[RMDB]
RNA sequence: GGGAACGACUCGAGUAGAGUCGAAAAGUCCCUCCAUUGGCAGCUGGACUGUUCUUUGGGGCCUUAUGUGGUGUUUGCCUCUGAGGUACUCAGGGGCAUUUAGGUUUUUCCUCAUUCUUAAACAAUAGGUUAGUUACCGUUUCGACGGUAACUAACCAAAAGAAACAACAACAACAAC
Reactivity to 2A3 in 0.01 (KOAc 150mM, MgCl2 10mM, bicine 150mM(pH8.5), 24C), signal-to-noise 3, nucleotides 027 to 126: g020u020c000c000c000u000c040c000a030u000u010g000g030c000a000g050c010u220g200g030a230c000u030g050u300u300c030u000u000u000g020g000g000g050c020c000u300u240a120u150g230u250g010g000u020g010u000u000u020g000c020c000u000c010u000g080a080g080g240u200a230c030u010c000a000g000g000g020g000c000a000u010u000u010a030g020g020u000u170u000u000u090c000c000u110c070a080u220u110c010u030u170a160a000a020c050a060a190u010a140

Source information: An RNA of 177 nucleotides, treated with 2A3 and read out base by base. For 2A3, 864 sequencing reads were counted. Values cover nucleotides 27 to 126. The reactions ran in a buffer of 150 mM KOAc, 10 mM MgCl2 and 150 mM bicine (pH 8.5), at 24 C.